[RMDB]
RNA sequence: GGGAACGACUCGAGUAGAGUCGAAAAUUUGAUAGGGGGUUUAACCGCUUGAGUUUUGGGGUGCAGGAUUUUGAUUUGGAAGUCCAAAAAGCCAUUCAUAGGAUCCAGCCUUUUGAAAUGGUUCAAGCCAUGAAAUUUAGUUCGCUAAAUUUCAUGGAAAAGAAACAACAACAACAAC
Reactivity to DMS in 0.01 (KOAc 150mM, MgCl2 10mM, bicine 150mM(pH8.5), 24C), signal-to-noise 2, nucleotides 027 to 126: u000u030u000g010a120u010a090g000g020g020g030g010u010u000u000a060a120c070c080g020c080u010u000g020a070g000u000u000u000u000g010g000g000g010u010g040c110a070g010g000a060u000u000u000u000g000a150u000u010u010g020g000a120a090g010u010c050c070a080a070a070a120a160g010c010c000a000u000u000c020a030u000a030g020g020a110u000c160c180a100g020c040c000u000u000u000u000g000a030a040a020u000g000g000u000u000c140a100a100g020
Description: Chemical mapping of a 177-nucleotide RNA with DMS. For DMS the reverse transcriptase was MarathonRT. Conditions: 150 mM KOAc, 10 mM MgCl2 and 150 mM bicine (pH 8.5), 24 C.